Structure probing data (DMS and 2A3) for a 177-nucleotide construct. For DMS, 2,412 sequencing reads were counted. The data come from the RNA Mapping Database (RMDB), library M2PK50. For DMS the reverse transcriptase was MarathonRT. The 2A3 profile rests on 5,286 reads. For 2A3 the reverse transcriptase was SuperScript II with manganese.
[RMDB]
RNA sequence: GGGAACGACUCGAGUAGAGUCGAAAAGUCCCAUACUUCGGUAUGGGACAAAUAAACUUGACUAAAGCCUGUCAAGAAUCACCACAGGCAAAGUGGUGUUAAAAACUAACUUGUUCGCAAGUUAGAACGCUUUAUUUUAGUUCGCUAAAAUAAAGCGAAAAGAAACAACAACAACAAC
Reactivity to DMS in 0.01 (KOAc 150mM, MgCl2 10mM, bicine 150mM(pH8.5), 24C), signal-to-noise 3, nucleotides 027 to 126: g020u000c000c000c000a000u000a000c010u000u030c180g020g000u000a000u000g000g000g010a000c000a000a040a060u010a040a090a080c010u010u010g000a020c000u000a020a020a040g010c000c010u000g000u000c000a000a000g000a300a110u010c010a010c010c000a040c010a090g010g050c250a080a080a090g010u000g010g010u000g010u000u010a050a050a080a070a110c010u010a000a000c000u000u000g000u000u000c200g020c000a020a010g000u000u000a010g000a040a140
Reactivity to 2A3 in 0.01 (KOAc 150mM, MgCl2 10mM, bicine 150mM(pH8.5), 24C), signal-to-noise 3, nucleotides 027 to 126: g000u000c020c010c000a000u010a000c020u030u080c240g080g000u010a000u000g010g000g010a000c000a000a000a000u020a000a030a020c000u010u000g010a000c010u020a040a000a100g200c010c030u010g020u010c010a000a000g020a050a030u080c000a010c010c010a010c000a040g300g070c080a110a070a010g000u000g000g000u010g010u030u040a070a140a000a010a000c000u000a000a000c000u010u010g020u060u060c140g010c130a010a000g000u000u010a000g010a050a020